RNA sequence: GGGAACGACUCGAGUAGAGUCGAAAAUUGCGCCUCCGAUUCGCCGUCGGCAUUUCCCCAGCAGCCAUGACCUACCAGGCUGCGAUGCGGCUCGCCGCACAGGUCAUCCCUCAUCGGGCGCGUCCUGGAUAGGGCUAUACUUUCGAGUAUAGCCCAACUGAUAGUAAAACUUCGGUUUUACUAUCAGAAAAGAAACAACAACAACAAC
Reactivity to 2A3 in 0.01 (KOAc 150mM, MgCl2 10mM, bicine 150mM(pH8.5), 24C), signal-to-noise 4, nucleotides 027 to 156: u100u100g000c000g000c000c030u050c070c040g030a040u110u130c050g010c030c010g040u050c010g020g000c030a070u080u060u080c020c000c010c000a000g000c000a010g000c010c000a190u120g040a110c020c020u100a160c150c050a020g000g010c010u000g000c010g010a030u070g000c050g010g000c020u040c120g030c010c010g080c020a040c020a040g020g080u110c060a200u120c100c020c020u110c040a080u070c050g000g010g000c000g020c010g020u040c000c000u020g050g010a110u070a130g010g000g000c000u010a000u000a000c000u030u070u160c190g050a020g010u000a000u000a020g000c030c000c000a000a000
Reactivity to DMS in 0.01 (KOAc 150mM, MgCl2 10mM, bicine 150mM(pH8.5), 24C), signal-to-noise 3, nucleotides 027 to 156: u000u000g020c000g020c020c010u010c030c020g030a150u000u000c070g020c050c100g000u000c030g040g030c070a190u010u000u000c010c000c040c060a180g010c010a040g000c010c020a150u000g020a130c090c030u010a100c070c070a230g010g000c000u010g020c010g010a010u000g020c020g020g000c130u000c170g020c030c010g080c070a050c060a040g020g010u010c060a120u000c000c010c010u010c110a130u000c050g000g020g040c020g020c030g010u000c010c000u000g020g020a200u000a110g020g040g030c010u000a020u000a000c000u000u000u000c290g030a050g030u000a010u000a000g010c000c000c010a000a020
This 207-nucleotide RNA was probed chemically with 2A3 and DMS. The data come from the RNA Mapping Database (RMDB), library M2RFPK. Conditions: 150 mM KOAc, 10 mM MgCl2 and 150 mM bicine (pH 8.5), 24 C. For 2A3 the reverse transcriptase was SuperScript II with manganese. Reactivities are given for positions 27 through 156.